[RMDB]
RNA sequence: GGGAACGACUCGAGUAGAGUCGAAAAGAACGAGAUGCUCGCCAUACCGAUGGAACUUAUCGCGCAUCUGGGCGCCGUCUCGAAAGAAGUAGCAAUUGCCAUGGCGGAAGGUGCGCUCGUGCAUUCAUAAUUACCCAGGCUUCGGCCUGGGUAAUUAAAAAGAAACAACAACAACAAC
Reactivity to DMS in 0.01 (KOAc 150mM, MgCl2 10mM, bicine 150mM(pH8.5), 24C), signal-to-noise 1, nucleotides 027 to 126: g040a090a180c050g010a070g020a020u000g020c110u020c100g010c010c020a110u010a170c090c040g000a060u000g020g020a130a090c140u020u000a070u000c140g020c160g000c000a000u020c000u000g050g000g020c010g000c280c010g020u010c090u000c080g000a080a160a070g010a020a080g020u020a070g000c040a250a140u000u050g060c040c010a110u000g000g020c050g000g000a100a060g020g020u020g000c000g040c050u000c000g060u000g020c050a060u000u020c080a110